[RMDB]
Notes
An RNA of 207 nucleotides, treated with 2A3 and read out base by base. Reactivities are given for positions 27 through 156. For 2A3 the reverse transcriptase was SuperScript II with manganese. For 2A3, 521 sequencing reads were counted. The RNA was probed in 150 mM KOAc, 10 mM MgCl2 and 150 mM bicine (pH 8.5) at 24 C. Source: RMDB library M2RFPK, as collected in RNAgym.
RNA sequence: GGGAACGACUCGAGUAGAGUCGAAAAGGACUGCGCAGUCCGGCAACAUCAGAAGAGAGCCCGCUAUACGUGACGGAUUGGCUGAAGCGUACAGAAAUAUUGAGCCUCCUGCAAGAGGCAGCCAAGCAAAACGUACGUGAGUUCGCUCACGUACGAACCGAAGGCAAUACUUCGGUAUUGCCUUCGGAAAAGAAACAACAACAACAAC
Reactivity to 2A3 in 0.01 (KOAc 150mM, MgCl2 10mM, bicine 150mM(pH8.5), 24C), signal-to-noise 1, nucleotides 027 to 156: g060g040a060c030u110g090c070g030c240a030g000u000c000c000g000g010c040a080a060c000a080u090c010a020g030a170a090g000a040g000a000g060c040c080c000g000c000u060a080u010a120c060g030u020g040a060c030g060g060a070u010u010g060g000c010u010g050a080a000g050c000g050u070a030c050a010g190a060a060a000u200a130u110u140g000a000g000c010c000u000c000c040u130g020c030a130a000g010a000g000g000c000a000g070c000c030a050a030g010c010a010a120a040a000c000g000u000a000c000g000u000g000a000g000u090u160c300g060c060u000c000a000c000g000u000a000c000g000a000a000